Source information: The record gives the reactivity of an RNA of 207 nucleotides to 2A3. Conditions: 150 mM KOAc, 10 mM MgCl2 and 150 mM bicine (pH 8.5), 24 C. It was measured as part of the RMDB library M2RFPK. 2A3 adducts were read by reverse transcription with SuperScript II with manganese. For 2A3, 1,091 sequencing reads were counted.
RNA sequence: GGGAACGACUCGAGUAGAGUCGAAAAAGUGUAUGAAGUUCGUAGAGUGUCGGCAAGCUCUAUAUAUGGACACUUACGAAGGGUUUUGGUUGUUUUGUAUCUCAAGCCGACUUUGAGUAUUUGAGGAAAAAGACUUACGCCUUCGGGCGUAAGUCAAGUUAUCUUUAGCGUUCGCGCUAAAGAUAACAAAAGAAACAACAACAACAAC
Reactivity to 2A3 in 0.01 (KOAc 150mM, MgCl2 10mM, bicine 150mM(pH8.5), 24C), signal-to-noise 2, nucleotides 027 to 156: a000g140u100g000u050a140u170g060a140a020g030u020u040c000g000u050a040g010a030g240u000g020u030c020g020g120c130a140a050g030c080u000c060u070a130u050a020u030a010u230g050g000a000c010a000c010u030u000a020c010g070a000a030g020g000g030u020u070u110u160g060g010u000u010g020u010u020u020u090g040u010a060u000c000u020c050a030a020g040c040c020g040a090c070u100u140u120g030a090g080u020a090u040u120u100g020a020g050g000a050a050a020a000a020g000a000c000u000u000a000c010g000c000c000u020u010c150g090g000g000c000g000u000a000a000g000u000c000a000a000